This 177-nucleotide RNA was probed chemically with DMS and 2A3. Conditions: 150 mM KOAc, 10 mM MgCl2 and 150 mM bicine (pH 8.5), 24 C. For 2A3, 1,034 sequencing reads were counted.
RNA sequence: GGGAACGACUCGAGUAGAGUCGAAAAUGGACACUGAGUUACAAGCUCAGUUUAUGGAAGAGUUUGAAGCCGGUCUGUAUGGUUAUACUUAUCUUGAAGAUGAAUAAGUAUUAGCUGCUGAUUAACAGAGUUGUCAGGAAUUCGUUCCUGACAACUCAAAAGAAACAACAACAACAAC
Reactivity to DMS in 0.01 (KOAc 150mM, MgCl2 10mM, bicine 150mM(pH8.5), 24C), signal-to-noise 2, nucleotides 027 to 126: u020g000g000a070c140a050c030u000g000a060g000u000u000a130c270a110a180g020c010u000c010a040g010u000u000u000a070u020g000g060a140a070g010a060g010u000u000u000g000a080a090g020c010c070g000g000u000c000u000g020u000a030u000g020g010u000u000a020u000a020c010u010u010a000u000c040u000u000g020a110a110g010a110u000g010a080a010u000a000a020g000u000a010u000u000a040g000c010u000g010c090u030g000a090u000u010a050a060c190a120
Reactivity to 2A3 in 0.01 (KOAc 150mM, MgCl2 10mM, bicine 150mM(pH8.5), 24C), signal-to-noise 1, nucleotides 027 to 126: u090g000g000a000c020a010c090u030g050a020g040u090u070a080c020a160a000g010c020u010c010a020g080u040u080u050a100u050g060g000a070a080g000a050g060u060u130u100g040a060a000g030c020c000g010g010u000c020u020g060u020a080u140g040g010u000u030a000u010a000c000u030u000a000u000c020u010u160g160a190a080g070a110u110g020a200a060u010a040a000g000u000a000u060u080a040g010c020u030g030c010u040g030a210u070u040a020a010c010a100